[RMDB]
RNA sequence: GGGAACGACUCGAGUAGAGUCGAAAACACGGGGUGCGUGACGGGCUGGUUCGCGACGCCAACAACUACGAGCAGCAAGAGCAGGCCUCCCAGCAGAUCCUCAGCAGCUAACGUCAGCCGCUGCAGCGUCGUUAAAACCAUUCGUGGUUUUAACGACAAAAGAAACAACAACAACAAC
Reactivity to DMS in 0.01 (KOAc 150mM, MgCl2 10mM, bicine 150mM(pH8.5), 24C), signal-to-noise 4, nucleotides 027 to 126: c120a140c110g000g010g010g020u000g030c070g000u010g010a080c090g020g030g000c050u010g000g000u010u010c030g010c040g020a060c130g000c060c050a070a080c070a080a090c070u020a100c040g020a060g010c050a040g010c050a070a120g000a110g010c060a060g000g000c030c000u010c020c010c020a120g010c130a060g010a080u010c040c020u010c030a070g000c000a020g000c030u000a060a130c120g010u010c080a100g030c020c050g000c010u000g000c130a100g020c180
Reactivity to 2A3 in 0.01 (KOAc 150mM, MgCl2 10mM, bicine 150mM(pH8.5), 24C), signal-to-noise 3, nucleotides 027 to 126: c060a050c030g010g000g000g010u070g020c080g030u010g050a060c030g030g040g040c020u040g010g110u080u050c030g000c020g090a070c050g060c020c030a060a050c030a040a020c040u190a050c090g040a020g040c010a000g010c020a080a040g020a030g080c040a020g050g010c000c000u040c010c000c000a030g040c000a010g020a110u060c010c000u020c010a000g000c010a000g000c010u060a100a070c080g180u110c110a010g000c010c030g000c020u020g040c020a040g060c030